[RMDB]
RNA sequence: GGGAACGACUCGAGUAGAGUCGAAAAAGCAUAGCGGUACGCCGCUACGCAAGGCGCAUUUGAACUGUAUUGUACGCCUUGCAUAAAGCAAAAGUACUAAAAAAACGUGCCGUUACGACGGCACGAAAAAACAUCCAUUGGUUCGCCAAUGGAUGAACAGUACGUAGGUGUUCGCACCUACGUACUGAAAAGAAACAACAACAACAAC
Reactivity to DMS in 0.01 (KOAc 150mM, MgCl2 10mM, bicine 150mM(pH8.5), 24C), signal-to-noise 1, nucleotides 027 to 156: a180g000c030a050u000a050g030c020g030g010u010a150c100g020c060c010g010c010u000a030c030g000c010a010a010g010g000c000g010c010a010u000u000u000g010a100a180c110u010g000u000a300u000u010g020u000a010c000g010c000c010u000u000g080c000a050u000a010a110a110g030c010a070a130a080a050g040u000a140c020u000a000a000a070a100a030a060a070c000g080u000g010c000c000g040u000u010a090c240g030a150c000g050g000c020a000c010g000a000a010a010a080a050a030c000a000u010c000c000a000u000u000g000g000u000u000c300g000c000c000a010a020u010g010g000a000u000g000a010a080
Reactivity to 2A3 in 0.01 (KOAc 150mM, MgCl2 10mM, bicine 150mM(pH8.5), 24C), signal-to-noise 5, nucleotides 027 to 156: a000g070c060a040u050a020g000c010g000g000u030a030c180g050c070c000g010c020u020a010c050g000c010a000a010g000g000c000g000c040a080u080u090u200g130a220a120c120u140g070u250a150u150u110g050u100a050c010g000c000c000u010u010g000c020a020u090a010a040a010g020c040a030a050a030a030g090u130a080c120u200a060a020a030a010a000a010a090c000g000u000g010c000c000g000u030u040a050c280g020a000c000g050g040c000a000c000g030a010a000a000a000a000a000c000a000u010c000c000a000u000u010g000g010u030u020c090g000c080c000a000a000u010g000g000a000u000g000a010a000